[RMDB]
RNA sequence: GGGAACGACUCGAGUAGAGUCGAAAAGGGGCAGGACGAAGUGGACAUUCUCGUCAGCCCCACCUCGCCGACCGGCAAUGACGACGAGGUGCAGCUUUGUCACCGGCUGGCAACGAGCGGACGGGUAGGUAGCAUGCUGAUUCGUCAGCAUGCUACCAAAAGAAACAACAACAACAAC
Reactivity to DMS in 0.01 (KOAc 150mM, MgCl2 10mM, bicine 150mM(pH8.5), 24C), signal-to-noise 2, nucleotides 027 to 126: g020g000g000g000c010a200g000g010a040c020g020a010a070g010u010g020g020a110c130a120u010u010c100u000c020g010u000c000a130g000c000c010c020c000a020c020c000u010c070g010c030c020g000a050c060c090g000g010c160a090a100u010g000a020c060g000a040c050g000a060g020g010u000g020c130a130g000c060u000u000u000g010u020c050a170c070c040g020g000c000u000g010g020c040a060a100c140g000a060g000c020g000g000a060c050g050g000g000u010a060
Reactivity to 2A3 in 0.01 (KOAc 150mM, MgCl2 10mM, bicine 150mM(pH8.5), 24C), signal-to-noise 2, nucleotides 027 to 126: g020g010g000g000c050a040g120g010a000c030g020a110a040g040u070g100g130a030c040a140u160u020c040u010c060g010u010c010a010g010c010c000c000c000a000c000c000u020c010g000c000c020g060a200c000c000g070g000c110a060a140u160g050a030c060g000a000c040g010a010g020g060u080g020c040a030g040c020u110u070u100g010u020c030a000c040c010g040g010c020u020g000g000c010a060a030c070g040a040g040c040g000g050a020c060g070g000g000u060a040
Record summary: Chemical mapping of a 177-nucleotide RNA with DMS and 2A3. The DMS profile rests on 1,870 reads. It was measured as part of the RMDB library OK2TST. The 2A3 profile rests on 3,238 reads.